[RMDB]
RNA sequence: GGGAACGACUCGAGUAGAGUCGAAAAGCUCUAGGAGACUAGAGCAAUACGUACGAGUGAUCGUGUCACUGAACUCAGAUAGCCAGUUCAGAGGCUGUCAAAGGACAUAGCUAUAGCUAUGUCCAAAGACCAUAGAUAGCUUCGGCUAUCUAUGGUCAAAAGAAACAACAACAACAAC
Reactivity to 2A3 in 0.01 (KOAc 150mM, MgCl2 10mM, bicine 150mM(pH8.5), 24C), signal-to-noise 3, nucleotides 027 to 126: g000c000u000c000u000a010g000g020a100g030a120c010u010a000g000a000g000c000a000a010u100a020c040g050u030a010c050g020a000g060u020g020a070u090c090g020u100g080u120c000a000c040u050g020a070a000c020u030c060a040g020a120u050a020g020c030c030a030g000u030u100c060a050g050a110g100g000c000u020g020u010c020a070a060a000g000g000a000c000a000u000a000g000c010u140a030u120a300g000c010u000a000u000g000u000c000c000a000a000a000
Reactivity to DMS in 0.01 (KOAc 150mM, MgCl2 10mM, bicine 150mM(pH8.5), 24C), signal-to-noise 2, nucleotides 027 to 126: g010c010u000c000u000a000g000g020a220g000a140c030u000a020g020a000g000c010a090a030u040a040c110g010u030a070c050g020a040g000u000g000a110u000c020g040u000g000u000c000a050c020u000g000a020a020c020u000c090a100g000a080u030a050g010c140c060a040g000u020u010c080a050g000a100g000g010c020u000g000u000c050a130a120a120g020g010a000c030a000u000a000g010c000u030a100u030a190g050c000u020a000u000g020u020c000c000a010a040a080